Conditions: 150 mM KOAc, 10 mM MgCl2 and 150 mM bicine (pH 8.5), 24 C. This 177-nucleotide RNA was probed chemically with 2A3.
RNA sequence: GGGAACGACUCGAGUAGAGUCGAAAAUCGGGACACAGGAUAAAGCUGCCAACGACGAAGGAAGAGGCUACUUCCCUGCUGUUCGAAGGGUUUAGCAUUCUACCGGCAAUGCGAGCAUCACGCACACGGCCGUAAGCAGGUUCGCCUGCUUACGGCCAAAAGAAACAACAACAACAAC
Reactivity to 2A3 in 0.01 (KOAc 150mM, MgCl2 10mM, bicine 150mM(pH8.5), 24C), signal-to-noise 1, nucleotides 027 to 126: u100c020g000g000g000a020c020a000c000a030g060g030a010u020a160a210a000g040c050u060g040c000c000a050a000c030g140a040c160g070a170a090g060g060a090a070g000a030g050g020c000u130a160c170u000u060c050c000c000u030g000c060u080g030u000u000c030g030a020a000g050g000g000u000u000u010a020g000c060a020u120u060c030u050a070c000c000g010g050c050a000a040u130g000c010g000a000g060c030a030u090c000a000c010g000c000a000c080a070c050

Values cover nucleotides 27 to 126. The 2A3 profile rests on 500 reads.